[RMDB]
RNA sequence: GGGAACGACUCGAGUAGAGUCGAAAAGGGGUCUCUUCCAACUCCGUUUGACGUGGUAGACAUGAGCUGAAGCCUCCACGGCUCAACAGCUACCACCGAGGAGUUAGAAGAGACGGAGGCACCCAAAGGUCUUUCCGCGUUCGCGCGGAAAGACCAAGGGACUAAAAUGGUUCGCCAUUUUAGUCCCAAAAGAAACAACAACAACAAC
Reactivity to 2A3 in 0.01 (KOAc 150mM, MgCl2 10mM, bicine 150mM(pH8.5), 24C), signal-to-noise 1, nucleotides 027 to 156: g090g020g040g000u020c010u000c000u000u020c010c000a010a000c000u010c000c000g040u150u070u280g050a000c010g000u000g000g010u010a020g020a120c100a300u210g010a020g000c010u010g030a120a010g050c000c000u010c000c000a070c030g010g070c000u020c030a070a080c070a040g090c000u000a010c000c000a010c000c000g040a030g000g000a010g000u010u000a000g000a000a010g020a010g010a000c000g000g010a000g000g000c020a010c000c000c020a000a130a040g030g000u010c000u000u000u010c030c000g020c070g130u010u090c290g020c000g000c010g130g000a000a000a020g000a000c000c000a020a000